[RMDB]
RNA sequence: GGGAACGACUCGAGUAGAGUCGAAAAGUGCUCUUACUCUUUUCUGAUAAAGAGGAGACUGCUGGACUCGCCGCCCAAGUUCGAGCAUGAGCCAAUUCCGAACGAGGGGUACGCGGGAGGAGGAUCACUGACCGAGAGGGGUGUAGUGGUAAAGAGGGUAAUUGGAUCGGUUCGCCGAUCCAAUUACAAAAGAAACAACAACAACAAC
Reactivity to 2A3 in 0.01 (KOAc 150mM, MgCl2 10mM, bicine 150mM(pH8.5), 24C), signal-to-noise 1, nucleotides 027 to 156: g000u030g000c040u000c000u020u150a260c020u040c000u140u090u180u030c250u300g160a220u180a260a040a010g010a020g020g000a000g010a010c100u040g010c010u000g010g010a020c000u000c050g000c030c020g040c000c020c000a040a020g010u020u040c020g070a090g000c070a090u000g050a020g100c020c030a120a190u070u020c030c000g010a060a040c040g000a080g050g010g000g010u070a020c080g000c030g020g000g000a050g000g000a010g050g000a030u090c000a010c090u100g070a070c020c020g100a050g020a030g030g110g020g010u150g020u110a050g010u020g050g050u110a070a090a000g030a010g110g000